Source information
Chemical mapping of a 177-nucleotide RNA with 2A3 and DMS. Conditions: 150 mM KOAc, 10 mM MgCl2 and 150 mM bicine (pH 8.5), 24 C. For 2A3 the reverse transcriptase was SuperScript II with manganese. Reactivities are given for positions 27 through 126. Source: RMDB library OK1LIB, as collected in RNAgym.
RNA sequence: GGGAACGACUCGAGUAGAGUCGAAAAUUUUGACAUUAAACGAAGAUUUUAUAGACGCUCAAAUACUCUGCAUCGGAGAAGUAUGCCGGUGGACGACCGGGAGUUGCGCUCGAUGCCCGCGGCUCAGCCACCAGUGAGAAUUCGUUCUCACUGGUGGAAAAGAAACAACAACAACAAC
Reactivity to 2A3 in 0.01 (KOAc 150mM, MgCl2 10mM, bicine 150mM(pH8.5), 24C), signal-to-noise 4, nucleotides 027 to 126: u130u040u010u070g120a060c080a100u160u100a050a040a000c120g080a110a100g080a170u030u060u070u030a210u120a080g140a050c080g010c040u000c030a030a120a030u090a100c020u030c010u040g040c000a040u010c030g070g040a050g020a130a020g060u060a040u130g010c000c000g000g040u050g050g150a080c070g030a020c020c000g000g040g000a020g040u020u080g040c060g000c010u020c040g010a010u050g010c000c010c010g000c000g030g000c030u010c030a030g010
Reactivity to DMS in 0.01 (KOAc 150mM, MgCl2 10mM, bicine 150mM(pH8.5), 24C), signal-to-noise 2, nucleotides 027 to 126: u020u000u000u000g020a150c100a170u020u030a020a040a140c150g010a140a080g000a110u040u000u040u000a120u010a090g000a100c100g010c020u010c000a030a080a110u010a060c020u000c030u020g000c000a010u010c050g000g020a030g000a060a020g030u020a050u000g010c000c030g000g000u000g040g020a060c180g010a090c040c010g000g000g000a120g010u000u000g000c000g030c040u000c070g000a100u000g000c070c040c010g020c060g000g000c000u000c050a180g000